Chemical mapping of a 177-nucleotide RNA with 2A3 and DMS. The RNA was probed in 150 mM KOAc, 10 mM MgCl2 and 150 mM bicine (pH 8.5) at 24 C. For 2A3, 8,390 sequencing reads were counted. For 2A3 the reverse transcriptase was SuperScript II with manganese.
[RMDB]
RNA sequence: GGGAACGACUCGAGUAGAGUCGAAAAGAUAUGGAGUCCUUGGGAGCUGCUGGUCGGAAACGACCAGGCAGCGAGGAUCAAGUGACUCCUAAGUCAAAAUCUCUCCAGACUUCGGUCUGGAGAGAAACUACAAAGUACUGUUCGCAGUACUUUGUAGAAAAGAAACAACAACAACAAC
Reactivity to 2A3 in 0.01 (KOAc 150mM, MgCl2 10mM, bicine 150mM(pH8.5), 24C), signal-to-noise 2, nucleotides 027 to 126: g010a000u020a010u060g000g000a000g000u000c000c000u000u000g010g000g010a030g010c000u020g050c020u010g000g010u010c000g000g030a000a010a010c000g000a010c010c010a010g040g070c020a000g000c000g020a140g000g000a000u010c000a000a000g030u060g240a010c010u000c000c010u000a000a000g000u000c000a010a010a100a280u020c000u000c000u000c010c000a020g000a020c010u060u300c300g110g000u000c000u000g000g010a010g000a010g000a000a000a000
Reactivity to DMS in 0.01 (KOAc 150mM, MgCl2 10mM, bicine 150mM(pH8.5), 24C), signal-to-noise 2, nucleotides 027 to 126: g000a010u000a010u010g000g000a020g010u000c000c000u010u000g000g020g000a010g040c000u000g000c000u000g000g000u000c000g020g010a000a000a020c000g000a020c000c000a020g010g020c010a010g010c000g010a040g030g000a050u010c010a010a020g000u010g000a010c000u000c000c000u000a000a070g010u010c000a140a130a180a160u000c010u010c000u000c000c000a000g000a020c010u000u020c270g040g020u000c000u000g000g000a000g000a000g010a010a010a140